[RMDB]
Structure probing data (DMS) for a 177-nucleotide construct. Source: RMDB library TTRDES, as collected in RNAgym. For DMS the reverse transcriptase was MarathonRT. The reactions ran in a buffer of 150 mM KOAc, 10 mM MgCl2 and 150 mM bicine (pH 8.5), at 24 C.
RNA sequence: GGGAACGACUCGAGUAGAGUCGAAAAGAUAUGGAUUUGCGUCAGCCGAUAAGCCUAUGUCGGAAACGACAUAAGGCUUUUGACGGCUGACCAAAUCCUAAGUCAAAGGGCUGCUUCGGCAGCCCAACAGUACGUAGGACUUCGGUCCUACGUACUGAAAAGAAACAACAACAACAAC
Reactivity to DMS in 0.01 (KOAc 150mM, MgCl2 10mM, bicine 150mM(pH8.5), 24C), signal-to-noise 1, nucleotides 027 to 126: g020a020u000a300u000g000g000a020u000u000u000g000c300g030u010c020a010g010c020c000g010a270u000a010a020g010c000c000u010a010u000g020u000c000g030g000a110a050a120c020g010a000c010a000u000a050a050g000g050c000u000u000u000u000g000a080c160g010g030c020u000g000a000c000c010a000a000a000u010c000c000u000a000a060g010u000c050a100a190a230g000g040g020c010u000g000c010u010u020c190g000g040c020a030g000c000c000c000a000a060